About this RNA:
Structure probing data (2A3 and DMS) for a 177-nucleotide construct. It was measured as part of the RMDB library OK1LIB. High 2A3 reactivity points to a flexible backbone, as in loops and unpaired stretches. The reactions ran in a buffer of 150 mM KOAc, 10 mM MgCl2 and 150 mM bicine (pH 8.5), at 24 C.
[RMDB]
RNA sequence: GGGAACGACUCGAGUAGAGUCGAAAAGCUAGGGAGCCCACGAUGCCAGUGGCCUGACGUCUAGUCAGCGUCUCAACUAGUCUGAGUCAAUUAAAACGCUCACGGUGAAGUACGGGACUACCACACAGUCUUAUCACUACUUCGGUGGUGGUAAGACAAAAGAAACAACAACAACAAC
Reactivity to 2A3 in 0.01 (KOAc 150mM, MgCl2 10mM, bicine 150mM(pH8.5), 24C), signal-to-noise 9, nucleotides 027 to 126: g030c020u040a020g010g020g010a020g020c000c000c000a020c010g040a030u080g020c010c020a010g010u010g020g000c000c000u000g000a010c000g040u060c080u070a020g000u010c010a000g010c020g040u000c000u000c010a020a030c010u030a010g040u000c030u020g010a010g030u040c010a010a040u120u130a060a040a020a010c040g000c010u000c010a020c040g000g000u040g040a080a010g020u050a040c030g000g000g020a030c010u040a050c000c020a030c000a000c010a040
Reactivity to DMS in 0.01 (KOAc 150mM, MgCl2 10mM, bicine 150mM(pH8.5), 24C), signal-to-noise 9, nucleotides 027 to 126: g010c050u010a060g010g000g010a090g010c070c000c020a070c090g000a120u020g000c070c070a060g020u000g010g000c220c020u000g000a040c040g010u020c100u030a090g000u010c030a120g000c140g000u000c010u000c060a090a050c030u010a110g000u010c040u010g000a030g000u020c080a090a110u030u030a060a070a100a130c220g000c020u000c010a040c080g000g000u010g000a090a100g020u020a060c070g000g000g000a050c030u010a120c040c030a070c130a070c200a120